RNA sequence: GGGAACGACUCGAGUAGAGUCGAAAAUUUAAUUUUUUGUGCUGGUCUCCAAAGAUUUUGCGCAAUAAACCGCACAAGUCUCCGGCCACGUAUGAAAUGGAGUGGCACAGCGUAAAAGAAUGGCGCCAACGCGCCUAAUUUUCGAAUUAGGCGCGUUAAAAGAAACAACAACAACAAC
Reactivity to DMS in 0.01 (KOAc 150mM, MgCl2 10mM, bicine 150mM(pH8.5), 24C), signal-to-noise 4, nucleotides 027 to 126: u010u070u030a060a020u000u010u010u010u000u000g020u000g010c000u000g010g000u010c050u010c090c100a110a150a060g000a050u000u010u020u000g020c000g040c040a080a080u000a050a090a070c180c030g000c010a010c080a010a020g010u000c000u010c050c110g020g010c000c010a010c030g010u030a080u030g010a100a100a130u020g000g010a180g010u000g010g020c030a100c040a050g020c050g010u000a030a030a040a070g010a060a060u020g020g000c070g000c050c120
Reactivity to 2A3 in 0.01 (KOAc 150mM, MgCl2 10mM, bicine 150mM(pH8.5), 24C), signal-to-noise 5, nucleotides 027 to 126: u070u070u050a070a080u030u070u040u030u040u060g010u000g010c030u060g020g070u040c040u050c110c040a060a180a030g040a030u120u110u100u090g020c020g000c000a000a010u100a290a100a020c050c020g010c010a010c030a070a030g030u010c020u000c050c010g050g000c010c010a020c040g080u120a060u190g160a050a060a050u230g090g040a080g020u020g030g010c020a010c010a030g030c030g030u060a020a060a010a030g110a040a020u120g060g000c010g000c000c000